An RNA of 177 nucleotides, treated with DMS and 2A3 and read out base by base. The data come from the RNA Mapping Database (RMDB), library RFM100. The DMS profile rests on 2,052 reads. The RNA was probed in 150 mM KOAc, 10 mM MgCl2 and 150 mM bicine (pH 8.5) at 24 C.
RNA sequence: GGGAACGACUCGAGUAGAGUCGAAAAAAAAUCACGUGAAAUAAUCAGAGGAAUCGUUUGAAAUCAUCGUAGUAAUCGCGCGAAAAUCACGUGAAAUAAUCAGAGGAAUCGUUUGAAAUCAUCGUAGACCUAAGCAGAUCUUCGGAUCUGCUUAGGUAAAAGAAACAACAACAACAAC
Reactivity to DMS in 0.01 (KOAc 150mM, MgCl2 10mM, bicine 150mM(pH8.5), 24C), signal-to-noise 2, nucleotides 027 to 126: a030a020a080a130u010c000a010c000g000u010g000a010a010a020u010a140a050u000c150a070g000a080g020g000a100a010u000c050g040u030u000u000g010a090a100a120u000c030a130u020c020g000u000a070g030u040a070a090u020c030g000c120g000c240g000a040a040a020a080u010c010a000c000g010u010g000a010a060a010u020a030a120u020c040a090g020a020g030g000a040a100u000c080g030u000u000u000g020a030a030a030u070c120a110u000c010g000u030a110g000
Reactivity to 2A3 in 0.01 (KOAc 150mM, MgCl2 10mM, bicine 150mM(pH8.5), 24C), signal-to-noise 2, nucleotides 027 to 126: a000a000a000a050u010c000a000c010g000u010g060a050a080a000u180a020a050u160c000a000g030a020g050g220a060a090u010c020g000u020u120u200g100a020a020a020u180c090a020u040c040g010u040a120g000u000a060a150u030c110g000c010g000c040g110a030a000a060a060u000c010a000c040g050u000g010a000a000a000u030a020a000u180c010a020g060a020g050g050a190a090u050c060g090u050u000u000g040a120a090a040u050c020a080u010c060g030u080a050g000